[RMDB]
RNA sequence: GGGAACGACUCGAGUAGAGUCGAAAAGACUUGUCUUCGGACAAGUCAAAAAGAUAUGGAAUCGACGAUCGAUCUACCCACCGCUUUGAACUCGGAAACGAGUUAUGGCGAGGAUCGGGAGAUUCCUAAGUCAAAAAACUGCCGUUCGCGGCAGUAAAGCUUAGGCGUUAUUCGUAACGCCUAAGCUAAAAGAAACAACAACAACAAC
Reactivity to 2A3 in 0.01 (KOAc 150mM, MgCl2 10mM, bicine 150mM(pH8.5), 24C), signal-to-noise 1, nucleotides 027 to 156: g000a010c010u030u000g000u010c000u120u130c300g090g020a000c010a010a000g010u000c000a010a010a010a010a010g040a040u070a010u100g000g030a010a010u040c010g120a140c010g050a160u050c000g010a020u030c070u090a200c000c050c050a000c030c060g010c020u190u000u250g210a000a020c000u000c010g030g050a080a030a020c010g000a010g000u030u000a000u030g000g000c000g010a040g050g000a000u010c000g030g000g000a080g000a000u020u050c000c000u000a100a010g040u000c000a030a030a030a020a020a030c010u020g000c070c000g010u000u080c200g020c000g250g000c000a020g000u080a010a000

An RNA of 207 nucleotides, treated with 2A3 and read out base by base. Source: RMDB library RNAMAK, as collected in RNAgym. Conditions: 150 mM KOAc, 10 mM MgCl2 and 150 mM bicine (pH 8.5), 24 C.